[RMDB]
Structure probing data (2A3 and DMS) for a 177-nucleotide construct. For DMS the reverse transcriptase was MarathonRT. The data come from the RNA Mapping Database (RMDB), library RFM100.
RNA sequence: GGGAACGACUCGAGUAGAGUCGAAAAAUCCCCGUAUGCGUAAAGUCAUACCAACGGCUUUAUGCGUAAAAUCCUGUAUGGGCCCGGGCCACUACAACGGCAGGGUACCAACAACAAUACAAGGAGAGUUUAGAUAUCGCUUCGGCGAUAUCUAAACAAAAGAAACAACAACAACAAC
Reactivity to 2A3 in 0.01 (KOAc 150mM, MgCl2 10mM, bicine 150mM(pH8.5), 24C), signal-to-noise 4, nucleotides 027 to 126: a000u090c030c000c000c030g080u080a040u060g010c000g000u000a000a000a000g000u000c000a030u080a300c010c050a150a040c080g000g000c000u000u000u000a000u000g000c000g000u000a010a030a030a070u010c020c010u000g010u040a090u140g010g000g000c000c000c000g070g220g000c020c000a090c140u300a110c080a130a030c110g000g010c010a020g000g030g020u040a140c010c000a020a010c010a040a000c030a010a080u100a070c040a120a090g010g000a090g020a000
Reactivity to DMS in 0.01 (KOAc 150mM, MgCl2 10mM, bicine 150mM(pH8.5), 24C), signal-to-noise 3, nucleotides 027 to 126: a180u040c010c000c050c280g030u010a010u000g020c000g090u000a000a000a000g000u000c010a300u050a190c300c300a030a100c210g000g000c010u000u000u000a000u000g000c000g120u000a040a050a070a130u000c040c000u000g000u000a020u000g000g000g030c020c000c000g030g060g050c020c030a140c110u100a070c300a120a140c260g000g000c020a300g000g000g010u000a050c000c000a100a070c080a110a170c200a150a120u000a000c020a000a160g000g000a040g040a150